[RMDB]
RNA sequence: GGGAACGACUCGAGUAGAGUCGAAAAGGCUGCUGCCGGAGCCGAUACCGGAAUACGAGACCUGAUGUGCGGUCGAAUGCACUGAAGUACGAAAGUACGAAGAGGUCAUACCGAGGACCGAGACUCGAUAUGCUCGCUAGAUGGAGCUUUACAUCAAGCAUUACUAUCCUUUCGAGGAUAGUAAUGCAAAAGAAACAACAACAACAAC
Reactivity to 2A3 in 0.01 (KOAc 150mM, MgCl2 10mM, bicine 150mM(pH8.5), 24C), signal-to-noise 4, nucleotides 027 to 156: g030g000c020u030g000c020u060g020c030c030g040g000a020g000c020c120g070a030u090a120c010c000g000g060a070a050u160a110c090g020a030g010a130c010c030u070g070a070u090g040u010g000c010g000g030u070c080g030a050a050u140g010c020a010c020u060g040a070a000g000u000a000c010g030a170a020a020g000u000a010c010g020a090a020g080a050g000g020u050c030a010u050a010c000c050g010a030g020g030a030c020c030g060a080g050a090c010u040c040g050a020u020a030u180g010c000u000c030g050c070u050a040g010a100u020g050g000a010g000c000u030u100u060a070c040a020u020c050a060a000
Reactivity to DMS in 0.01 (KOAc 150mM, MgCl2 10mM, bicine 150mM(pH8.5), 24C), signal-to-noise 2, nucleotides 027 to 156: g000g020c010u000g040c000u000g010c020c040g000g010a080g010c050c060g000a180u010a020c060c020g000g020a140a170u000a040c060g000a140g000a090c040c020u000g050a140u010g010u020g010c020g020g000u000c160g000a030a110u000g040c010a080c030u000g020a160a160g010u020a050c020g000a260a060a130g010u000a040c010g010a060a110g000a040g000g000u000c000a100u000a060c010c010g000a060g020g020a300c090c120g000a230g020a120c000u000c030g000a050u010a050u000g000c070u000c000g000c040u010a140g010a090u000g020g000a090g010c060u010u000u000a050c090a180u000c060a050a300